[RMDB]
RNA sequence: GGGAACGACUCGAGUAGAGUCGAAAACAAAUAGAGGAUAAGUUGAACAAUACUUAGAGUAAGGGUUAAAUCUAUAGAUACUAAGUAGAAUACUCAAGGUGAAAACUUUUUAUCCAUUAUUGAUGGAAAUAGCGUAUGCAUUCGUGCAUACGCUAUUAAAAGAAACAACAACAACAAC
Reactivity to 2A3 in 0.01 (KOAc 150mM, MgCl2 10mM, bicine 150mM(pH8.5), 24C), signal-to-noise 2, nucleotides 027 to 126: c020a000a060a040u160a060g090a060g070g010a040u040a090a030g040u060u110g060a080a020c010a060a050u020a180c050u050u020a030g000a010g010u030a050a110g030g030g050u040u200a030a110a080u000c030u040a100u100a240g050a070u120a120c020u000a150a000g010u000a010g070a180a080u060a050c020u030c060a000a030g040g000u050g040a030a030a030a030c020u000u080u000u030u060a010u030c000c000a010u070u130a070u020u170g040a030u130g020g130a090
Reactivity to DMS in 0.01 (KOAc 150mM, MgCl2 10mM, bicine 150mM(pH8.5), 24C), signal-to-noise 3, nucleotides 027 to 126: c050a090a040a040u000a030g010a100g000g020a020u000a020a040g010u010u000g000a100a090c110a170a190u000a060c000u000u000a100g010a070g020u010a060a120g010g000g010u000u010a060a130a140u010c020u000a060u000a110g000a100u020a090c050u000a030a070g000u010a010g000a110a210u000a040c040u000c040a050a090g000g000u020g000a060a100a090a030c000u000u000u020u000u000a050u020c000c000a070u000u000a080u000u000g010a110u020g000g000a060